[RMDB]
RNA sequence: GGGAACGACUCGAGUAGAGUCGAAAAGCAGUUCCAGUGUCUGUGGACACUGAAUACUAGCGGUCAGUCGUCGUCCACAGACGACGUGAAGUGAUUAUGAGAAUGAUCACACUGACGACGUAUUCUCAUAUGUCCUAUCGCUAGGAACUGGAUAGGCCGUCACCAUACGAUUCGUCGUAUGGUGACGAAAAGAAACAACAACAACAAC
Reactivity to DMS in 0.01 (KOAc 150mM, MgCl2 10mM, bicine 150mM(pH8.5), 24C), signal-to-noise 1, nucleotides 027 to 156: g000c040a030g000u010u030c010c000a010g070u000g010u000c020u000g040u000g000g080a030c000a050c030u010g000a020a010u000a110c000u000a230g000c000g020g000u000c020a020g080u000c000g030u000c000g040u000c020c130a210c240a120g020a050c000g030a000c010g000u030g020a020a110g020u010g010a060u010u000a050u000g010a300g030a300a080u000g000a040u000c010a030c010a270c060u000g030a050c040g000a090c100g000u010a020u010u000c000u000c080a150u010a110u000g000u020c000c040u000a110u000c000g060c030u000a180g040g000a040a010c000u000g030g010a060u000a190g000g010c030
Reactivity to 2A3 in 0.01 (KOAc 150mM, MgCl2 10mM, bicine 150mM(pH8.5), 24C), signal-to-noise 4, nucleotides 027 to 156: g080c010a000g000u010u000c000c000a000g010u010g010u060c110u090g130u140g070g000a000c000a000c050u050g000a000a010u020a010c060u070a000g300c120g060g070u020c000a010g010u010c000g000u010c000g000u010c020c070a190c030a170g000a000c000g010a000c000g030u100g140a100a040g000u010g000a000u000u020a010u060g120a050g060a180a020u030g010a000u010c000a000c000a000c020u010g000a020c040g020a020c050g020u010a010u030u020c040u000c030a080u100a060u280g000u000c010c000u050a050u050c000g000c080u060a120g000g000a010a000c000u000g040g000a050u080a070g060g050c070
Conditions: 150 mM KOAc, 10 mM MgCl2 and 150 mM bicine (pH 8.5), 24 C. An RNA of 207 nucleotides, treated with DMS and 2A3 and read out base by base. As a SHAPE reagent, 2A3 marks flexible, mostly unpaired nucleotides at the ribose 2'-OH. It was measured as part of the RMDB library OK3TST. The 2A3 profile rests on 2,684 reads. 2A3 adducts were read by reverse transcription with SuperScript II with manganese. DMS adducts were read by reverse transcription with MarathonRT. Reactivities are given for positions 27 through 156.